[RMDB]
RNA sequence: GGGAACGACUCGAGUAGAGUCGAAAACUCCUUUGCGCGGAGACGCAUGAGAACCUCGAUAAGCGCAAGCUUACCGAAACUCAUGUGCAGGCUUUGAAAGCCCGGACCGCAAUAUUCGAGGUUGGCGGAUGUAGAAACCAUUCGUGGUUUCUACAUCAAAAGAAACAACAACAACAAC
Reactivity to DMS in 0.01 (KOAc 150mM, MgCl2 10mM, bicine 150mM(pH8.5), 24C), signal-to-noise 4, nucleotides 027 to 126: c100u020c010c030u010u010u000g010c130g010c040g020g010a140g010a300c030g000c000a000u000g030a030g000a080a110c300c070u010c000g000a030u000a000a000g000c010g000c300a060a090g010c000u000u000a000c030c010g010a010a100a130c000u000c000a000u000g030u000g030c010a120g000g000c010u000u030u030g010a120a180a080g000c010c020c110g020g000a120c160c000g000c010a040a110u030a070u020u030c110g000a060g000g020u020u000g020g000c150g020
Reactivity to 2A3 in 0.01 (KOAc 150mM, MgCl2 10mM, bicine 150mM(pH8.5), 24C), signal-to-noise 5, nucleotides 027 to 126: c040u050c000c000u040u050u080g020c030g000c020g010g030a060g020a070c040g000c000a000u010g000a000g020a040a050c000c070u020c000g000a020u000a000a000g000c010g020c100a050a030g000c010u000u000a010c000c000g000a060a050a020c000u010c000a000u020g000u020g000c010a010g000g000c000u080u080u220g280a300a120a020g000c000c000c010g060g070a070c020c030g000c000a010a030u100a120u090u150c090g040a030g010g120u040u040g080g060c060g040
This 177-nucleotide RNA was probed chemically with DMS and 2A3.
For DMS the reverse transcriptase was MarathonRT.